Chemical mapping of a 177-nucleotide RNA with DMS and 2A3. 2A3 adducts were read by reverse transcription with SuperScript II with manganese. The reactions ran in a buffer of 150 mM KOAc, 10 mM MgCl2 and 150 mM bicine (pH 8.5), at 24 C. For DMS the reverse transcriptase was MarathonRT. For DMS, 2,600 sequencing reads were counted. It was measured as part of the RMDB library RFMREP.
[RMDB]
RNA sequence: GGGAACGACUCGAGUAGAGUCGAAAAAGCUAAAUAUUGGUGCGAGACCGAUAGCGAACAAGUACCGUGAGGGAAAGAUGAAAAGAACUUUGAAAAGAGAGUUAAAGAGUACCUGAAACUGCUGAAAGUAUAUUUAUGACUUCGGUCAUAAAUAUACAAAAGAAACAACAACAACAAC
Reactivity to DMS in 0.01 (KOAc 150mM, MgCl2 10mM, bicine 150mM(pH8.5), 24C), signal-to-noise 3, nucleotides 027 to 126: a130g020c040u020a100a070a120u020a120u000u000g020g050u010g000c150g020a150g000a080c030c020g020a040u010a020g010c030g010a070a060c090a060a060g010u000a070c030c020g010u010g000a180g010g000g020a050a060a080g010a040u010g000a040a030a080a140g000a080a030c050u010u000u000g000a040a090a110a150g000a080g000a040g000u000u000a040a070a080g010a100g000u010a080c040c010u000g000a060a060a050c110u010g000c040u000g010a150a070a070
Reactivity to 2A3 in 0.01 (KOAc 150mM, MgCl2 10mM, bicine 150mM(pH8.5), 24C), signal-to-noise 2, nucleotides 027 to 126: a000g050c030u080a050a090a100u210a120u080u150g020g000u000g010c040g050a060g120a050c030c000g040a050u050a020g030c020g030a050a020c020a010a050g010u010a030c020c070g040u080g050a060g000g050g010a050a080a000g080a070u100g080a050a080a030a070g040a040a010c020u080u080u080g150a100a130a010a000g120a000g010a000g000u040u060a100a060a000g030a030g050u050a050c000c000u020g030a110a010a100c030u090g060c030u040g030a080a030a000